An RNA of 177 nucleotides, treated with DMS and read out base by base. Source: RMDB library OK2TRN, as collected in RNAgym. Values cover nucleotides 27 to 126.
RNA sequence: GGGAACGACUCGAGUAGAGUCGAAAAAUUGUGCUGGACUCUUGGGAUAGAAUAGAUAGACAGCAAAUAAGAAGAAGUCCCUGAGGAAAUUGUUAAAUCAAUGAAUGAUCCCUGAAAUGGCUCAUUAAUACGACAAAAAGUUCGCUUUUUGUCGUAUAAAAGAAACAACAACAACAAC
Reactivity to DMS in 0.01 (KOAc 150mM, MgCl2 10mM, bicine 150mM(pH8.5), 24C), signal-to-noise 3, nucleotides 027 to 126: a090u010u000g020u010g030c010u000g010g010a200c150u000c020u010u000g000g030g030a250u020a120g000a110a070u010a040g010a050u000a100g010a260c020a030g000c020a010a040a050u000a090a100g000a130a110g020a180a170g000u000c000c010c000u010g000a140g000g000a050a070a030u000u000g010u000u000a050a090a060u010c060a040a070u010g010a070a040u020g010a050u000c070c010c040u010g000a080a050a080u010g000g010c260u010c020a060u010u010a100